Structure probing data (2A3) for a 207-nucleotide construct. The 2A3 profile rests on 1,326 reads. For 2A3 the reverse transcriptase was SuperScript II with manganese.
[RMDB]
RNA sequence: GGGAACGACUCGAGUAGAGUCGAAAAAGCGUAGCGGUACGCCGCUUCGCAAGGCGCAUUUGAACUGUAUUGUACGCCUUGCAUAAAGCAAAAGUACUAAAAAAACGUGCCGUUACGACGGCACGAAAAAACAUCCAUUGGUUCGCCAAUGGAUGAAGGACCUUUCUUUGUUCGCAAAGAAAGGUCCAAAAGAAACAACAACAACAAC
Reactivity to 2A3 in 0.01 (KOAc 150mM, MgCl2 10mM, bicine 150mM(pH8.5), 24C), signal-to-noise 2, nucleotides 027 to 156: a000g050c020g000u010a000g050c030g000g010u020a020c060g020c010c000g000c000u010u050c060g000c010a000a000g000g000c030g000c070a110u020u100u300g090a110a090c070u090g040u270a090u100u150g010u040a040c010g000c000c000u000u000g000c010a040u110a110a080a000g050c000a050a020a010a030g070u110a050c060u200a080a040a020a010a060a050a060c000g000u000g000c000c000g000u000u010a000c090g010a000c000g000g010c040a000c020g060a020a010a010a000a000a000c010a000u000c000c000a010u000u010g000g000u020u010c100g010c100c000a000a000u000g000g000a000u000g000a000a000